Chemical mapping of a 177-nucleotide RNA with DMS and 2A3. Conditions: 150 mM KOAc, 10 mM MgCl2 and 150 mM bicine (pH 8.5), 24 C. DMS adducts were read by reverse transcription with MarathonRT. Source: RMDB library TTRDEL, as collected in RNAgym. Values cover nucleotides 27 to 126.
RNA sequence: GGGAACGACUCGAGUAGAGUCGAAAAGAUAUGGACGUACUUUUGACGUCCUGGCUCUCGGAAACGAGAGCCUGUACGGACGAUAAGUACAGUCCUAAGUCAAAAUCUCAGUGUUCGCACUGAGAAACCUUUUAGUAUAGUUCGCUAUACUAAAAGGAAAAGAAACAACAACAACAAC
Reactivity to DMS in 0.01 (KOAc 150mM, MgCl2 10mM, bicine 150mM(pH8.5), 24C), signal-to-noise 9, nucleotides 027 to 126: g000a040u010a300u010g000g010a030c000g010u010a010c010u000u000u000u000g010a190c060g010u000c010c010u000g000g010c000u000c000u000c000g010g000a090a100a160c000g010a010g000a010g010c000c000u010g020u000a050c170g000g000a070c010g010a080u000a010a010g010u000a000c000a120g020u000c000c010u000a030a100g000u000c040a070a070a110a120u000c000u000c000a010g020u000g000u000u010c230g020c000a010c000u000g000a000g000a010a060a090
Reactivity to 2A3 in 0.01 (KOAc 150mM, MgCl2 10mM, bicine 150mM(pH8.5), 24C), signal-to-noise 8, nucleotides 027 to 126: g030a020u070a040u140g000g000a000c010g010u010a010c010u080u090u080u170g260a120c060g000u000c000c010u000g010g000c000u000c000u000c000g020g020a090a060a050c000g010a000g000a000g000c000c000u000g020u060a040c090g000g070a040c040g050a050u020a110a000g010u010a030c160a070g000u000c000c000u010a080a010g040u020c030a040a070a210a300u010c000u000c000a000g000u020g100u100u140c300g050c100a000c010u000g000a000g000a030a010a010